Source information
Structure probing data (2A3 and DMS) for a 177-nucleotide construct. For DMS, 851 sequencing reads were counted. 2A3 adducts were read by reverse transcription with SuperScript II with manganese.
RNA sequence: GGGAACGACUCGAGUAGAGUCGAAAAAGAAAAGCGCAUGAGAAGAUCACUGAUAGCCAAAAACGCGAUUAUAAACGGAAAUCUAUGAGCAACAGCGUCCGGCGUAACCGAAAGAUGCCGAAAAAAAGACUAUAAUUGGUUUCGACCAAUUAUAGUCAAAAGAAACAACAACAACAAC
Reactivity to 2A3 in 0.01 (KOAc 150mM, MgCl2 10mM, bicine 150mM(pH8.5), 24C), signal-to-noise 1, nucleotides 027 to 126: a030g050a000a110a000a020g030c110g020c080a110u150g050a010g030a210a020g020a050u020c030a030c050u050g030a040u060a030g000c000c090a050a110a000a070a040c070g030c050g010a000u140u080a050u110a140a070a010c050g040g050a090a040a060u090c060u080a080u130g050a010g020c030a030a040c000a060g030c000g050u000c020c020g000g000c000g060u010a010a020c020c080g050a100a040a060g020a030u030g000c000c000g160a100a000a020a000a000a000a010
Reactivity to DMS in 0.01 (KOAc 150mM, MgCl2 10mM, bicine 150mM(pH8.5), 24C), signal-to-noise 1, nucleotides 027 to 126: a140g000a190a080a140a130g000c080g020c030a040u000g000a170g020a100a080g000a110u010c030a020c130u030g010a060u010a070g030c050c030a000a050a080a090a100c070g000c030g000a050u020u050a050u010a020a090a030c110g020g000a070a040a050u010c050u000a050u010g000a070g000c030a060a030c060a030g000c100g020u000c050c030g000g000c030g000u000a030a100c040c040g030a040a030a090g010a040u010g000c000c000g020a000a000a010a100a070a100a110
For DMS the reverse transcriptase was MarathonRT. The reactions ran in a buffer of 150 mM KOAc, 10 mM MgCl2 and 150 mM bicine (pH 8.5), at 24 C.